[RMDB]
RNA sequence: GGGAACGACUCGAGUAGAGUCGAAAACUUCCCAACUGCCUCACAAGGACAUUCAUGGCAACCGUAAUUCAUCCUCGCCCUCUGAUGAACUUGCUGGGCAGGAAGCAUCAGUAUGAGUAACAGGCAGCUAGUCAUACUAGUUCGCUAGUAUGACUAGAAAAGAAACAACAACAACAAC
Reactivity to 2A3 in 0.01 (KOAc 150mM, MgCl2 10mM, bicine 150mM(pH8.5), 24C), signal-to-noise 5, nucleotides 027 to 126: c010u020u010c000c000c000a000a030c010u000g000c000c000u110c020a010c010a020a020g030g010a040c010a040u040u060c040a010u150g010g000c020a050a040c040c040g110u110a050a190u200u160c070a090u080c050c050u070c060g000c010c000c000u000c010u000g010a010u010g000a010a010c000u020u020g010c060u020g040g000g000c000a000g000g020a020a020g020c020a040u080c020a010g100u120a100u190g090a040g050u070a050a030c010a010g080g010c000a000g020
Reactivity to DMS in 0.01 (KOAc 150mM, MgCl2 10mM, bicine 150mM(pH8.5), 24C), signal-to-noise 7, nucleotides 027 to 126: c300u010u000c000c010c000a180a230c020u000g010c000c010u000c250a080c030a030a020g000g010a210c030a020u000u000c060a010u010g010g000c020a080a120c280c130g000u010a090a100u020u020c160a120u010c030c050u010c300g000c010c000c000u000c000u000g000a020u000g000a070a140c020u000u000g000c080u000g010g000g000c010a020g000g010a070a100g010c050a040u000c080a070g000u000a060u010g010a080g010u000a060a040c060a050g010g010c150a080g010